This 177-nucleotide RNA was probed chemically with 2A3. It was measured as part of the RMDB library OK1LIB.
[RMDB]
RNA sequence: GGGAACGACUCGAGUAGAGUCGAAAACGCUGUUUGGGUUCGUGCCACCUUUAAGAGCUGUAACAGUCACCGCAGAGGUCCGUGGCUUCGUUCUUGAAGUCAGCGAGACCACGAACCCACCGGCGGGCUCCAGGAGCUGGUUCGCCAGCUCCUGGAGAAAAGAAACAACAACAACAAC
Reactivity to 2A3 in 0.01 (KOAc 150mM, MgCl2 10mM, bicine 150mM(pH8.5), 24C), signal-to-noise 1, nucleotides 027 to 126: c030g000c040u070g050u170u110u060g050g000g000u030u000c000g000u010g040c000c000a140c060c060u000u110u110a090a050g050a000g080c050u100g030u120a140a000c000a100g080u050c060a100c040c080g000c090a020g010a080g220g030u040c010c040g020u020g000g000c080u000u040c030g010u030u070c050u070u190g020a000a000g000u070c020a070g100c000g000a110g010a060c090c000a000c020g000a010a000c000c000c000a000c000c000g000g000c000g000g000g020